[RMDB]
RNA sequence: GGGAACGACUCGAGUAGAGUCGAAAAUGCAUAUUCGAGGUCAAGCUCGAAGGCAAGGUCACUGGGUACGCCUGCCUGGUAGGAGAUAAAGUGAUGAAACCAGCACACGUGAAAGGAGUCAUAGACACGCAGGAUAGUGAUUCGUCACUAUCCUGCGAAAAGAAACAACAACAACAAC
Reactivity to DMS in 0.01 (KOAc 150mM, MgCl2 10mM, bicine 150mM(pH8.5), 24C), signal-to-noise 3, nucleotides 027 to 126: u010g010c030a050u010a110u010u000c040g010a040g010g040u000c300a100a250g010c010u010c020g000a050a050g000g020c010a070a040g010g000u000c040a070c070u000g000g010g010u000a060c180g000c060c020u010g010c070c020u010g010g010u000a140g010g000a080g000a140u010a050a030a080g010u000g000a020u010g000a060a060a120c060c010a080g000c050a060c040a040c090g000u000g010a020a080a120g000g010a060g010u000c040a110u010a100g030a060c150a190
Reactivity to 2A3 in 0.01 (KOAc 150mM, MgCl2 10mM, bicine 150mM(pH8.5), 24C), signal-to-noise 1, nucleotides 027 to 126: u040g010c010a030u090a100u170u050c050g000a010g030g020u100c100a040a060g070c000u000c000g040a010a010g000g000c030a080a000g050g000u020c020a010c090u070g120g000g050u080a050c060g020c010c010u030g020c000c000u000g060g010u060a020g000g130a060g000a050u100a150a100a000g050u030g060a180u060g020a080a030a000c010c000a000g020c020a000c030a000c050g090u070g080a000a130a000g090g020a030g010u030c020a050u050a040g070a030c030a010
This 177-nucleotide RNA was probed chemically with DMS and 2A3.
For 2A3, 1,453 sequencing reads were counted.
The reactions ran in a buffer of 150 mM KOAc, 10 mM MgCl2 and 150 mM bicine (pH 8.5), at 24 C.